Conditions: 150 mM KOAc, 10 mM MgCl2 and 150 mM bicine (pH 8.5), 24 C. This 177-nucleotide RNA was probed chemically with DMS and 2A3. Values cover nucleotides 27 to 126. Source: RMDB library OK1LIB, as collected in RNAgym.

RNA sequence: GGGAACGACUCGAGUAGAGUCGAAAACCUGCGUGAGCCGUUGUAAAUGGCGCUGUGACCCAUUACUACACGCAAAUGAUGUAGAGAUUGAUCACGUAGCGUCGCGGUUGGCGGUUCCGGCCGCGGGUCAAGCUUCGGGCUUCGGUCCGAGGCUUGAAAAAGAAACAACAACAACAAC
Reactivity to DMS in 0.01 (KOAc 150mM, MgCl2 10mM, bicine 150mM(pH8.5), 24C), signal-to-noise 9, nucleotides 027 to 126: c000c000u010g010c010g020u030g000a030g000c010c010g020u000u000g020u020a060a190a130u020g000g000c000g000c000u000g000u000g000a010c030c010c000a000u000u000a000c000u000a000c010a010c040g010c270a100a100a090u040g000a110u000g010u000a010g000a300g010a040u000u000g000a120u000c010a010c010g010u050a030g010c010g020u000c000g010c100g000g010u010u010g000g010c030g010g000u000u000c050c230g010g020c160c020g010c010g000g000g000
Reactivity to 2A3 in 0.01 (KOAc 150mM, MgCl2 10mM, bicine 150mM(pH8.5), 24C), signal-to-noise 5, nucleotides 027 to 126: c000c000u000g010c010g010u060g010a000g000c000c000g000u000u010g130u100a040a020a010u050g000g000c000g000c000u010g000u000g000a000c000c000c000a000u000u000a000c000u000a000c000a000c000g060c010a010a010a050u180g070a020u000g000u000a010g030a000g000a010u000u020g000a000u000c000a000c020g050u060a010g000c000g000u000c000g000c020g050g050u010u030g000g000c000g000g000u000u010c010c000g040g000c010c010g000c000g010g000g000